[RMDB]
RNA sequence: GGGAACGACUCGAGUAGAGUCGAAAAGGAUGCACCGUAGUAAGGUGUGUGACUUCUAGCUCUUGAGUCACACAUUACUGGUCGUAGUGCGAUUCAAGAGCUAGAUCGCGUUACGACCGGUGUAUCGCUACGAGUGACAAUUCGUUGUUACUUGUAGAAAAGAAACAACAACAACAAC
Reactivity to 2A3 in 0.01 (KOAc 150mM, MgCl2 10mM, bicine 150mM(pH8.5), 24C), signal-to-noise 9, nucleotides 027 to 126: g050g000a000u000g000c000a000c000c010g040u040a020g010u010a060a060g120g020u020g010u010g010u010g030a010c010u060u020c030u080a030g030c020u040c010u100u080g020a000g000u000c000a000c000a000c000a020u040u140a050c030u060g060g020u040c020g000u010a000g010u000g000c010g000a000u090u070c050a060a020g030a010g100c000u010a010g000a000u000c000g000c000g010u000u000a000c000g000a010c000c030g000g000u000g000u000a010u000c000g000
Reactivity to DMS in 0.01 (KOAc 150mM, MgCl2 10mM, bicine 150mM(pH8.5), 24C), signal-to-noise 9, nucleotides 027 to 126: g000g000a010u000g010c000a010c000c000g010u010a110g010u000a050a060g010g020u000g010u000g010u000g000a030c050u000u000c070u000a070g010c090u000c080u000u000g000a030g010u000c000a010c010a010c000a050u000u000a060c020u000g010g010u000c040g010u000a010g010u000g010c010g000a010u000u000c090a080a090g000a080g010c110u000a030g000a010u000c000g010c000g010u000u000a000c000g000a040c070c010g000g000u000g020u000a010u000c010g000